Record summary
Structure probing data (2A3 and DMS) for a 207-nucleotide construct. 2A3 adducts were read by reverse transcription with SuperScript II with manganese. The RNA was probed in 150 mM KOAc, 10 mM MgCl2 and 150 mM bicine (pH 8.5) at 24 C.
[RMDB]
RNA sequence: GGGAACGACUCGAGUAGAGUCGAAAAUACGGCACACCAGGAUGCGGCAAAACAAGCACUGGCCUCGCACUAGCUGAAUACACCGGGCGUAAUAUCUUUCGUAUUAAAGUUAACCAAAUAUUAAGCUCGGCUGAGUUUGAUAAAGCAUGUCGGAAUAGCGAAGUAUAAGUUUCGACUUAUACUUCGCAAAAGAAACAACAACAACAAC
Reactivity to 2A3 in 0.01 (KOAc 150mM, MgCl2 10mM, bicine 150mM(pH8.5), 24C), signal-to-noise 2, nucleotides 027 to 156: u070a000c010g000g020c010a030c020a040c090c000a030g140g000a110u050g030c000g060g000c010a020a030a090a120c020a040a030g040c000a040c070u040g010g000c000c000u070c040g000c000a010c060u090a000g060c030u030g020a060a000u100a090c060a010c020c000g020g000g020c010g000u030a000a000u010a010u060c020u000u130u070c070g020u050a040u130u210a170a160a070g050u170u080a020a070c030c060a090a050a000u020a010u010u000a050a000g000c000u000c010g040g000c040u040g050a070g030u080u110u040g080a070u090a090a070a000g010c030a030u040g040u050c020g040g050a090a150u140a080
Reactivity to DMS in 0.01 (KOAc 150mM, MgCl2 10mM, bicine 150mM(pH8.5), 24C), signal-to-noise 1, nucleotides 027 to 156: u000a020c030g030g000c030a070c070a060c060c020a050g010g000a130u010g020c060g050g030c040a070a100a070a150c090a090a130g020c000a140c020u000g020g050c000c010u010c080g040c070a050c050u000a140g000c020u000g010a060a160u000a110c090a020c000c000g040g020g030c030g000u010a010a020u010a040u000c030u000u000u010c050g010u010a140u000u010a050a110a190g000u000u000a080a240c020c000a020a060a050u000a030u010u000a010a000g000c010u010c010g030g030c060u000g000a180g000u000u000u030g030a150u000a020a100a050g030c040a130u000g010u000c020g000g000a040a070u010a230